[RMDB]
RNA sequence: GGGAACGACUCGAGUAGAGUCGAAAACGGGGUAUAUCGAUGGCAAUUUCAAGGCCCUUUUUAUGGGCCUCCAGGGAGAUCAUAUCAACCGAUUGUUCAAUCAUUUCUUCCACAGAAAAAUCGAUGCGUUGUAAAGGGGGUUCGCCCCCUUUACAACAAAAGAAACAACAACAACAAC
Reactivity to DMS in 0.01 (KOAc 150mM, MgCl2 10mM, bicine 150mM(pH8.5), 24C), signal-to-noise 2, nucleotides 027 to 126: c030g030g040g010g000u070a040u040a000u000c020g050a020u000g000g000c090a010a040u020u010u010c180a190a090g000g000c000c000c000u000u020u050u040u050a030u080g010g000g000c020c010u000c130c110a010g000g000g000a300g000a000u020c100a000u000a300u020c030a040a170c050c070g000a030u000u000g000u010u000c110a070a030u060c120a110u000u000u000c030u000u000c000c000a030c260a060g020a000a080a050a070a040u020c070g010a080u000g010c140
Reactivity to 2A3 in 0.01 (KOAc 150mM, MgCl2 10mM, bicine 150mM(pH8.5), 24C), signal-to-noise 3, nucleotides 027 to 126: c040g010g030g030g000u080a090u040a020u110c060g010a020u100g020g010c000a120a090u110u110u080c070a010a100g010g000c000c000c000u040u050u030u110u110a160u100g000g000g000c030c030u000c000c010a020g000g030g000a080g000a000u050c020a040u060a020u030c010a030a000c000c000g020a050u000u070g050u130u150c060a090a080u030c020a070u040u010u010c060u110u060c030c040a170c000a110g150a050a060a010a020a000u090c060g060a030u170g080c020